The record gives the reactivity of an RNA of 177 nucleotides to DMS and 2A3. Reactivities are given for positions 27 through 126. 2A3 adducts were read by reverse transcription with SuperScript II with manganese. DMS adducts were read by reverse transcription with MarathonRT. The RNA was probed in 150 mM KOAc, 10 mM MgCl2 and 150 mM bicine (pH 8.5) at 24 C. Source: RMDB library OK2TST, as collected in RNAgym.
[RMDB]
RNA sequence: GGGAACGACUCGAGUAGAGUCGAAAAGUGUGUUUUCUGGUCAGAGACUAUUGUUGAUGAGACUCGAUCUGCAUGUAGUAAUAUUGCUACAACCAUCACAAAAUCAAUAGAAAAGGGCUACUCGCGAGAGUGCCCUAGCAUUCGUGCUAGGGCACUCAAAAGAAACAACAACAACAAC
Reactivity to DMS in 0.01 (KOAc 150mM, MgCl2 10mM, bicine 150mM(pH8.5), 24C), signal-to-noise 2, nucleotides 027 to 126: g010u000g000u000g020u010u000u000u000c020u000g010g000u010c040a120g020a100g000a220c020u000a050u000u010g020u030u000g070a040u000g010a140g000a100c050u000c120g020a040u000c080u000g010c110a120u000g000u000a010g020u000a060a190u010a120u020u010g030c010u000a030c040a050a120c280c060a040u000c030a130c140a030a020a100a050u000c060a030a040u010a030g000a060a040a110a160g020g000g030c010u000a030c070u000c050g000c110g000a220
Reactivity to 2A3 in 0.01 (KOAc 150mM, MgCl2 10mM, bicine 150mM(pH8.5), 24C), signal-to-noise 2, nucleotides 027 to 126: g020u090g000u030g040u040u030u100u100c020u030g020g010u020c020a010g040a020g020a200c010u040a030u100u040g000u050u050g050a040u040g040a020g030a110c030u010c110g060a210u020c040u030g050c060a100u110g010u000a020g000u020a070a130u130a110u300u160g010c000u000a000c010a020a050c030c020a030u060c020a020c060a020a180a080a080u180c040a030a060u020a110g030a050a090a000a000g030g030g000c010u010a030c000u040c090g030c050g020a050